The record gives the reactivity of an RNA of 177 nucleotides to 2A3 and DMS. The RNA was probed in 150 mM KOAc, 10 mM MgCl2 and 150 mM bicine (pH 8.5) at 24 C.
RNA sequence: GGGAACGACUCGAGUAGAGUCGAAAAAAGAUAUGGAAGGAGAACUACUCUUGAAACCACGCGUUUGACGUGAACUCGGAAACGAGUUCACCGAGCGUGGUCGUACGGAGCUCCUUCCUAAGUCAAACUCUAAUGCCUACUUCGGUAGGCAUUAGAGAAAAGAAACAACAACAACAAC
Reactivity to 2A3 in 0.01 (KOAc 150mM, MgCl2 10mM, bicine 150mM(pH8.5), 24C), signal-to-noise 1, nucleotides 027 to 126: a000a020g030a010u060a010u090g000g000a030a010g090g040a030g020a180a080c100u210a080c020u300c010u090u140g050a060a030a030c000c000a060c010g060c000g140u110u270u300g080a090c040g010u030g010a000a000c000u000c000g000g070a030a040a000c010g000a030g000u000u010c000a000c000c020g000a000g000c000g040u030g000g010u000c000g000u020a050c040g000g000a000g060c010u000c000c000u020u000c000c000u000a000a000g000u030c030a020a060a170
Reactivity to DMS in 0.01 (KOAc 150mM, MgCl2 10mM, bicine 150mM(pH8.5), 24C), signal-to-noise 2, nucleotides 027 to 126: a110a060g000a020u000a290u000g000g000a000a010g020g010a020g020a080a020c120u030a300c020u000c010u000u000g010a300a060a060c000c000a020c010g000c010g020u030u020u000g030a160c300g000u000g000a000a000c000u010c000g000g000a070a050a070c000g000a010g000u010u000c000a000c000c000g020a020g060c000g010u000g030g000u010c050g000u010a200c260g010g000a030g000c000u000c000c000u000u000c000c010u000a000a060g000u000c030a070a070a180
For 2A3 the reverse transcriptase was SuperScript II with manganese. For DMS, 1,408 sequencing reads were counted. DMS adducts were read by reverse transcription with MarathonRT. It was measured as part of the RMDB library TTRDES.